[RMDB]
RNA sequence: GGGAACGACUCGAGUAGAGUCGAAAAGAAAGAAAGAAAAACUCGUCGUCACGAAGUACGAAAAGCGUGGAAGUACAGUGACGGUAGGAAACUACCGACGAGGAACCACGCUGAAAAGAAAAGAAAAGGGUAAGAGAUAGUUCGCUAUCUCUUACCCAAAAGAAACAACAACAACAAC
Reactivity to 2A3 in 0.01 (KOAc 150mM, MgCl2 10mM, bicine 150mM(pH8.5), 24C), signal-to-noise 2, nucleotides 027 to 126: g130a000a040a000g200a030a070a030g110a060a100a030a000a000c010u000c040g010u000c050g040u000c000a010c040g090a160a010g010u050a010c000g030a030a030a000a030g000c010g000u000g000g040a080a020g040u010a010c060a020g010u020g060a010c000g000g000u010a000g000g030a110a060a020c000u000a000c010c000g030a000c020g010a000g050g000a000a000c000c000a000c000g010c000u040g040a050a050a020a020g090a030a040a020a000g100a020a090a010a020
Reactivity to DMS in 0.01 (KOAc 150mM, MgCl2 10mM, bicine 150mM(pH8.5), 24C), signal-to-noise 3, nucleotides 027 to 126: g010a070a060a120g000a090a080a170g020a090a050a020a060a080c020u000c020g000u000c250g000u010c010a020c000g000a150a100g000u010a020c020g010a100a110a070a020g020c000g060u000g000g000a060a130g000u020a060c070a110g000u020g000a040c010g030g030u000a000g000g000a040a090a150c000u000a000c000c040g000a300c020g000a060g010g010a120a110c030c000a000c000g000c000u000g030a040a080a040a060g010a080a110a090a090g000a050a030a090a090